[RMDB]
This 177-nucleotide RNA was probed chemically with DMS and 2A3.

RNA sequence: GGGAACGACUCGAGUAGAGUCGAAAAGAUAUGGAGCUAGAAGCACAACAGCCCUACACUCGGAAACGAGUGAGGGACAUGUGCCUAGCUCCUAAGUCAAACGGCUUUCAGUUCGCUGAAAGCCGAACGUUCACAACUCGUUCGCGAGUUGUGAACGAAAAGAAACAACAACAACAAC
Reactivity to DMS in 0.01 (KOAc 150mM, MgCl2 10mM, bicine 150mM(pH8.5), 24C), signal-to-noise 1, nucleotides 027 to 126: g020a040u000a050u000g010g000a020g010c000u010a020g000a240a120g040c010a010c010a200a130c270a280g000c030c000c040u000a140c000a000c020u000c010g010g020a000a090a030c010g010a000g030u000g000a100g000g000g000a010c030a040u000g010u000g010c000c000u000a010g000c000u010c000c000u000a000a030g000u010c000a110a120a300c020g000g000c020u000u000u000c010a020g010u010u010c300g010c020u000g000a000a020a000g010c000c000g000a000a070
Reactivity to 2A3 in 0.01 (KOAc 150mM, MgCl2 10mM, bicine 150mM(pH8.5), 24C), signal-to-noise 1, nucleotides 027 to 126: g040a010u040a000u000g030g020a010g000c000u010a000g040a300a010g250c010a000c030a190a300c150a280g000c020c010c000u000a240c000a000c020u000c000g010g000a010a000a010c000g000a000g000u010g000a000g020g000g020a000c020a190u300g000u000g010c000c000u000a000g000c000u020c000c000u000a010a000g010u020c010a000a050a120c020g030g000c000u040u000u000c010a080g010u090u120c300g000c160u000g050a000a000a000g000c030c000g000a020a000
Background: Source: RMDB library TTRDES, as collected in RNAgym. 2A3 adducts were read by reverse transcription with SuperScript II with manganese. The 2A3 profile rests on 2,054 reads. For DMS the reverse transcriptase was MarathonRT. For DMS, 842 sequencing reads were counted.